[RMDB]
RNA sequence: GGGAACGACUCGAGUAGAGUCGAAAAAGUGAUGAUACGUCAUCGCAACGAUUGCCUGAUCGUAAAACAGGAGACGGCCGUGGCCGCGACCACGUAAAAAAGCGUAACGUGGUCUACGGACCACGAAAAAAGCGCGGAACGUUCGCGUUCCGCGCAACUAUAUACGAUACUUCGGUAUCGUAUAUAGAAAAGAAACAACAACAACAAC
Reactivity to 2A3 in 0.01 (KOAc 150mM, MgCl2 10mM, bicine 150mM(pH8.5), 24C), signal-to-noise 3, nucleotides 027 to 156: a000g020u010g010a000u000g000a000u020a070c210g070u030c010a010u000c010g000c010a040a060c000g020a010u010u030g020c010c020u020g010a010u010c050g110u190a000a040a030a000c020a030g040g020a030g090a060c150g090g020c100c000g000u010g010g000c010c000g010c010g000a000c000c010a000c020g020u040a040a050a040a040a030a000g060c030g040u040a090a010c000g000u000g000g010u010c000u030a050c090g040g000a090c000c000a000c010g010a020a010a010a000a000a000g010c000g010c000g000g000a000a000c000g010u060u100c180g000c010g140u000u020c030c000g000c000g010c010a000a000